[RMDB]
RNA sequence: GGGAACGACUCGAGUAGAGUCGAAAAUUGUCGUCUUCAUGUCGCGGCCCGUAAGGUGCAGUGCGUUGAUAAGGCCCGCAGCCGCGAUGAUGGCCGUGCCAUGCUGGUCGUCGUGGAAGACGGGAAAACCACUGCCCUCAUUCGUGAGGGCAGUGGUAAAAGAAACAACAACAACAAC
Reactivity to DMS in 0.01 (KOAc 150mM, MgCl2 10mM, bicine 150mM(pH8.5), 24C), signal-to-noise 2, nucleotides 027 to 126: u000u000g030u000c000g000u010c000u000u000c030a160u040g030u000c010g000c000g000g000c030c010c070g000u010a060a080g030g010u000g010c070a090g000u000g010c060g030u000u000g020a160u000a060a190g010g080c010c050c040g030c160a300g000c020c000g040c060g010a030u000g000a030u000g010g010c000c040g000u000g020c080c090a090u000g000c030u010g020g020u010c000g060u000c030g030u000g000g020a020a070g000a060c000g040g010g000a030a020a140
Reactivity to 2A3 in 0.01 (KOAc 150mM, MgCl2 10mM, bicine 150mM(pH8.5), 24C), signal-to-noise 1, nucleotides 027 to 126: u070u110g220u090c000g010u010c000u030u020c030a030u110g010u010c040g000c010g020g030c000c080c000g090u090a070a090g020g010u140g070c040a060g060u040g110c000g120u020u070g110a160u050a090a060g010g000c020c000c040g000c070a000g000c000c000g020c010g000a010u090g000a000u020g040g060c000c030g030u000g000c050c030a070u100g000c010u000g050g010u000c000g020u020c010g040u070g100g000a020a020g060a010c070g000g020g060a020a000a000
Conditions: 150 mM KOAc, 10 mM MgCl2 and 150 mM bicine (pH 8.5), 24 C. This 177-nucleotide RNA was probed chemically with DMS and 2A3. The 2A3 profile rests on 1,083 reads. For 2A3 the reverse transcriptase was SuperScript II with manganese.